Notes:
The data come from the RNA Mapping Database (RMDB), library M2PK90. Structure probing data (DMS and 2A3) for a 177-nucleotide construct. Values cover nucleotides 27 to 126. The reactions ran in a buffer of 150 mM KOAc, 10 mM MgCl2 and 150 mM bicine (pH 8.5), at 24 C.

[RMDB]
RNA sequence: GGGAACGACUCGAGUAGAGUCGAAAAUGCGAUAAACGGCACCUAUAAGGUGGUGCCGAACCAGCGUGACCUACCAACACGGAACGAGCAGUCUGGUAUGACUGCAAACCUAUGGUAAACAAAAGAAUAUUCUAUUCUAGUUCGCUAGAAUAGAAUAAAAAGAAACAACAACAACAAC
Reactivity to DMS in 0.01 (KOAc 150mM, MgCl2 10mM, bicine 150mM(pH8.5), 24C), signal-to-noise 7, nucleotides 027 to 126: u000g000c010g000a080u010a070a110a150c010g010g010c010a000c000c000u000a160u010a120a130g020g020u010g010g030u000g010c000c000g010a020a010c150c140a160g010c010g020u010g010a110c010c010u000a040c010c010a090a100c130a060c180g010g000a070a080c190g020a190g000c010a010g010u000c000u000g020g020u000a070u000g000a010c000u000g010c000a030a060a050c020c010u000a070u000g010g000u000a010a060a050c110a030a040a100a120g000a090a080
Reactivity to 2A3 in 0.01 (KOAc 150mM, MgCl2 10mM, bicine 150mM(pH8.5), 24C), signal-to-noise 5, nucleotides 027 to 126: u050g000c010g030a040u100a080a130a020c010g020g000c010a010c000c020u100a100u060a300a100g260g070u120g010g000u000g000c000c000g000a000a000c010c010a010g000c010g030u020g030a040c000c000u000a010c010c010a090a090c080a020c150g030g030a150a030c030g030a080g020c000a000g000u000c000u090g130g100u270a120u230g010a000c000u000g000c000a010a020a010c020c000u040a050u080g000g000u040a110a100a010c040a030a090a030a010g100a080a030